[RMDB]
RNA sequence: GGGAACGACUCGAGUAGAGUCGAAAAACGGCAAACGCUGCUCCUAAAUAGGCUUGUUGUUCGUGGACGGAAAUGAAGGGCCUGAAACUGAAGCAGUAUAUGUAUGCCUGCCACGGAGAGCAGAGUAAUUACUAGGAGGAUUCGUCCUCCUAGUAAUAAAAGAAACAACAACAACAAC
Reactivity to 2A3 in 0.01 (KOAc 150mM, MgCl2 10mM, bicine 150mM(pH8.5), 24C), signal-to-noise 9, nucleotides 027 to 126: a010c040g030g000c030a100a080a020c060g010c010u020g010c010u020c010c010u120a170a160a100u160a060g030g020c040u030u070g020u060u050g030u040u040c030g020u080g040g060a050c040g010g100a050a060a050u190g050a090a090g030g020g010c000c010u030g070a110a100a020c050u060g020a050a000g030c030a010g060u050a040u010a010u160g110u020a030u090g010c000c000u010g010c000c010a060c060g060g020a080g010a000g010c030a010g020a010g080u090a100
Reactivity to DMS in 0.01 (KOAc 150mM, MgCl2 10mM, bicine 150mM(pH8.5), 24C), signal-to-noise 9, nucleotides 027 to 126: a130c090g000g000c040a060a090a080c110g010c000u000g010c010u000c020c020u000a050a090a120u040a040g000g010c050u010u010g010u000u000g010u000u000c110g020u010g010g010a120c070g000g000a050a050a060u030g020a100a110g010g010g010c020c000u000g010a080a070a090c130u000g010a080a050g000c010a020g010u000a090u030a070u030g010u010a060u020g010c020c000u000g010c010c020a070c120g010g000a070g000a070g000c030a040g000a090g010u010a090